An RNA of 207 nucleotides, treated with DMS and 2A3 and read out base by base. The RNA was probed in 150 mM KOAc, 10 mM MgCl2 and 150 mM bicine (pH 8.5) at 24 C. For 2A3, 530 sequencing reads were counted.

RNA sequence: GGGAACGACUCGAGUAGAGUCGAAAAACAACAGAUAGCUGGAACCAGCGUAGAAUUCUACGCAUAUCCAUAGCGAAUGGUACCUGUAAAGAAAAUAAUGAGGUAUGUACAAGUACCAACAGGUCUCAAUGCCAUGGUGAUGUCAAUCACAUAUGCAUAGCACUAAUGACUUCGGUCAUUAGUGCUAAAAAGAAACAACAACAACAAC
Reactivity to DMS in 0.01 (KOAc 150mM, MgCl2 10mM, bicine 150mM(pH8.5), 24C), signal-to-noise 1, nucleotides 027 to 156: a180c010a030a160c050a100g030a090u000a140g020c030u000g000g030a160a060c060c030a140g120c030g030u010a040g020a280a120u000u000c010u000a040c030g000c000a220u000a070u000c070c020a010u000a020g000c050g000a140a140u010g050g000u000a010c080c000u000g020u010a010a120a090g000a270a120a050a110u000a020a100u000g000a210g000g010u000a000u010g030u000a060c080a050a160g000u000a010c000c000a040a120c010a100g020g010u000c060u010c000a040a120u000g000c020c030a000u000g000g030u000g010a140u000g000u000c150a040a070u000c110a020c020a010u000a110u000g000c010a250
Reactivity to 2A3 in 0.01 (KOAc 150mM, MgCl2 10mM, bicine 150mM(pH8.5), 24C), signal-to-noise 2, nucleotides 027 to 156: a000c090a010a000c020a010g160a090u040a020g000c030u030g050g040a100a120c120c040a040g000c010g010u010a000g040a190a300u300u230c000u000a000c000g000c020a010u110a030u000c010c000a060u170a040g000c080g060a060a000u000g000g000u020a000c000c000u000g040u060a000a100a030g230a170a070a000a030u300a030a060u230g050a000g090g000u010a010u030g040u010a030c020a080a070g000u010a000c000c000a000a000c010a010g020g010u010c000u000c040a030a080u000g000c000c000a010u040g000g040u000g000a010u060g050u200c120a150a060u000c000a000c040a050u100a020u210g070c080a130